[RMDB]
RNA sequence: GGGAACGACUCGAGUAGAGUCGAAAAAUAAACAGCCUUAGCCUAUGUUUUCAUCCCAACAAAUAAUACGCGAGGUAACAAUGACUGUACGCGUAUUAAUCAGUCAAUAACGCUAAGGUAAAAAAAAACAUCUACUUUAGUUCGCUAAAGUAGAUGUAAAAGAAACAACAACAACAAC
Reactivity to 2A3 in 0.01 (KOAc 150mM, MgCl2 10mM, bicine 150mM(pH8.5), 24C), signal-to-noise 3, nucleotides 027 to 126: a000u180a020a080a020c020a020g020c000c000u000u000a000g020c010c020u150a120u170g020u010u070u040u100c050a080u030c030c000c000a010a020c020a010a130a040u100a010a000u010a010c010g010c010g000a050g150g170u070a110a020c030a090a110u090g030a030c000u030g000u100a040c010g000c000g010u000a000u010u010a000a050u020c020a000g020u000c000a010a130u060a080a020c040g010c010u000a000a000g000g000u060a090a010a010a000a000a000a000a000
Reactivity to DMS in 0.01 (KOAc 150mM, MgCl2 10mM, bicine 150mM(pH8.5), 24C), signal-to-noise 2, nucleotides 027 to 126: a070u010a030a090a100c090a120g010c020c000u000u000a010g000c000c060u030a060u000g020u000u010u000u010c200a130u000c000c000c000a140a120c190a040a110a110u000a030a000u000a000c000g010c010g000a180g030g020u020a120a090c220a030a100u000g000a010c000u000g000u000a040c010g000c020g020u010a000u000u000a040a100u000c040a030g010u010c030a080a040u010a050a120c190g020c000u000a030a020g010g000u010a000a000a000a000a020a060a050a070

Chemical mapping of a 177-nucleotide RNA with 2A3 and DMS. DMS (dimethyl sulfate) methylates the pairing face of unpaired adenines and cytosines. The RNA was probed in 150 mM KOAc, 10 mM MgCl2 and 150 mM bicine (pH 8.5) at 24 C.